[RMDB]
RNA sequence: GGGAACGACUCGAGUAGAGUCGAAAAGAAAAAGAUACGCGAACGUCAAGGUUAAGAAGAACCGCAAGACGACGCGAAGAAAUGCUCACAAACGAAAGUGAGCAAACAAUUGCGGUUCAAAAGAAAAAUCGGGUAAAUAUUUCGAUAUUUACCCGAUAAAAGAAACAACAACAACAAC
Reactivity to 2A3 in 0.01 (KOAc 150mM, MgCl2 10mM, bicine 150mM(pH8.5), 24C), signal-to-noise 4, nucleotides 027 to 126: g050a000a070a020a000a010g180a060u210a070c040g000c000g100a250a050c000g020u010c030a030a080g130g030u200u270a080a090g070a060a050g000a030a030c000c000g000c010a000a000g010a020c030g020a020c000g000c010g040a010a010g020a030a040a020u100g000c000u020c010a030c020a030a220a090c180g130a060a040a020g020u000g000a000g010c000a000a000a000c040a050a110u040u030g000c000g020g000u000u010c010a040a010a010a090g090a010a070a020a000
Reactivity to DMS in 0.01 (KOAc 150mM, MgCl2 10mM, bicine 150mM(pH8.5), 24C), signal-to-noise 3, nucleotides 027 to 126: g030a050a110a060a120a100g010a130u040a150c010g000c020g010a110a070c000g060u000c030a180a160g020g010u050u020a110a030g010a070a140g000a030a020c000c000g000c000a000a050g010a040c040g000a230c020g040c000g000a110a060g000a080a090a120u000g000c000u000c010a000c020a050a110a300c170g000a080a090a090g000u000g000a020g010c000a010a060a050c110a080a190u010u000g000c020g000g000u000u000c010a080a040a050a060g000a070a060a060a110

The record gives the reactivity of an RNA of 177 nucleotides to 2A3 and DMS. The RNA was probed in 150 mM KOAc, 10 mM MgCl2 and 150 mM bicine (pH 8.5) at 24 C. It was measured as part of the RMDB library OK1LIB. For 2A3 the reverse transcriptase was SuperScript II with manganese.